Structure probing data (DMS and 2A3) for a 207-nucleotide construct. It was measured as part of the RMDB library OK3TST. The RNA was probed in 150 mM KOAc, 10 mM MgCl2 and 150 mM bicine (pH 8.5) at 24 C.

RNA sequence: GGGAACGACUCGAGUAGAGUCGAAAAACAUCUGUAAUAUUCACACUGCCAUUACCUUUAAUCUUCUGAGCUCCCCUUUCUGACUUCCCCUACAAAUCGAUUCUAAACCCUGCUGCUAGGGCAGUUGUCAGCUUGUGCACUUGGAUCAUUUUGCACCGAGACAUGCAUUAUUCGUAAUGCAUGUCUCAAAAGAAACAACAACAACAAC
Reactivity to DMS in 0.01 (KOAc 150mM, MgCl2 10mM, bicine 150mM(pH8.5), 24C), signal-to-noise 1, nucleotides 027 to 156: a100c040a070u010c050u000g030u000a070a110u000a170u010u010c050a000c080a070c020u020g020c000c010a090u000u000a050c050c030u000u000u000a120a100u000c040u000u000c050u010g010a090g020c050u000c000c000c010c010u000u020u000c000u020g030a070c050u000u010c030c010c010c040u000a160c030a030a020a060u000c050g020a090u010u030c050u000a080a080a070c000c000c000u000g000c040u000g030c080u000a090g050g010g050c010a030g030u000u010g020u000c000a070g020c080u000u010g020u000g000c000a020c050u010u000g010g010a040u000c050a180u000u000u000u000g010c040a060c120c120
Reactivity to 2A3 in 0.01 (KOAc 150mM, MgCl2 10mM, bicine 150mM(pH8.5), 24C), signal-to-noise 2, nucleotides 027 to 156: a000c010a080u010c040u110g070u140a110a180u110a120u300u160c000a040c000a000c010u080g030c070c000a020u050u130a130c020c000u120u160u140a160a080u140c110u140u030c050u070g050a080g060c010u000c030c040c000c000u050u070u000c010u010g090a090c000u050u010c040c010c000c000u000a000c020a020a050a060u100c030g010a010u060u000c010u060a050a090a130c020c020c000u030g040c020u010g000c030u020a020g000g010g020c000a000g030u020u020g010u000c000a010g000c010u040u010g010u010g020c000a010c050u000u020g000g030a070u130c010a050u010u140u110u030g080c030a060c080c000